Chemical mapping of a 177-nucleotide RNA with DMS and 2A3.

RNA sequence: GGGAACGACUCGAGUAGAGUCGAAAAAAUGUCUAAUGCUGCUUCCACAAAUAUUUGAGGACUGCUAACACAUUUCCUUCUUCUACUUACUCCACAAGGCUUCUUUUCUUCAAACCAAACAUGCCCAUCCAGGAUUGAUUUUCGAAUCAAUCCUGGAAAAAGAAACAACAACAACAAC
Reactivity to DMS in 0.01 (KOAc 150mM, MgCl2 10mM, bicine 150mM(pH8.5), 24C), signal-to-noise 2, nucleotides 027 to 126: a050a010u000g010u000c050u000a100a130u020g000c020u010g020c040u000u000c020c000a140c010a040a080a150u040a120u060u030u000g010a100g000g040a070c060u020g000c000u000a170a210c210a020c030a030u000u020u000c050c000u000u010c050u000u000c010u000a050c000u050u040a060c090u020c020c030a040c090a060a150g000g030c070u000u000c000u030u020u000u000c020u000u000c060a070a050a090c120c020a070a100a030c050a080u000g000c020c000c000a110
Reactivity to 2A3 in 0.01 (KOAc 150mM, MgCl2 10mM, bicine 150mM(pH8.5), 24C), signal-to-noise 4, nucleotides 027 to 126: a030a000u090g000u000c050u080a190a090u150g010c020u010g020c020u110u000c020c000a070c060a070a130a060u290a140u140u070u070g060a080g020g000a020c010u030g000c010u070a050a000c000a010c000a070u000u010u010c030c000u030u090c020u050u010c010u010a070c000u050u030a030c030u020c000c000a060c020a160a000g040g000c010u030u030c000u030u070u010u010c010u040u080c040a070a070a070c040c000a020a080a010c020a030u130g020c010c000c000a050